[RMDB]
RNA sequence: GGGAACGACUCGAGUAGAGUCGAAAACGGGGUUGGCUAUAGUUGAUUUCGAACCGUAUGCUUAUGUAUAUGGAAUGAUUUGUACGCUUUACGCAUGUGUACACUCACUCUCAGUUCACUCUUGUGAGAGAAGGGAGAGAGAGAUAUUUUGCGAUUAGGUAUCUGUUAUGUUCGCAUGGUGGAUAUCAAAAGAAACAACAACAACAAC
Reactivity to DMS in 0.01 (KOAc 150mM, MgCl2 10mM, bicine 150mM(pH8.5), 24C), signal-to-noise 1, nucleotides 027 to 156: c040g010g020g030g000u010u010g020g010c050u010a150u000a100g000u000u000g020a110u000u010u000c020g000a050a180c020c010g050u000a030u000g000c030u010u000a110u010g040u000a020u000a020u010g000g000a100a150u000g010a090u000u010u010g000u010a050c070g000c030u000u000u000a130c100g060c040a070u010g020u000g070u000a030c000a100c090u000c010a150c000u000c010u000c030a090g010u010u000c040a080c000u010c040u000u020g020u010g010a070g010a080g020a060a090g000g010g010a040g010a060g000a050g020a020g000a070u000a010u010u000u010u000g020c000g020a160u000u000a060
Reactivity to 2A3 in 0.01 (KOAc 150mM, MgCl2 10mM, bicine 150mM(pH8.5), 24C), signal-to-noise 2, nucleotides 027 to 156: c090g000g000g060g000u030u060g040g000c020u050a040u070a130g020u010u010g040a140u030u020u030c030g050a030a010c000c000g010u000a000u020g000c020u300u050a130u250g030u000a010u000a010u070g000g000a050a030u060g020a100u130u050u060g010u000a010c030g000c010u060u060u030a010c020g020c010a010u050g020u000g000u010a010c020a030c000u020c000a050c000u000c040u020c010a090g050u080u010c020a030c060u020c050u130u210g040u150g060a000g000a000g020a030a020g060g030g000a010g000a000g000a000g010a000g000a030u020a060u120u140u050u070g010c010g020a030u010u070a040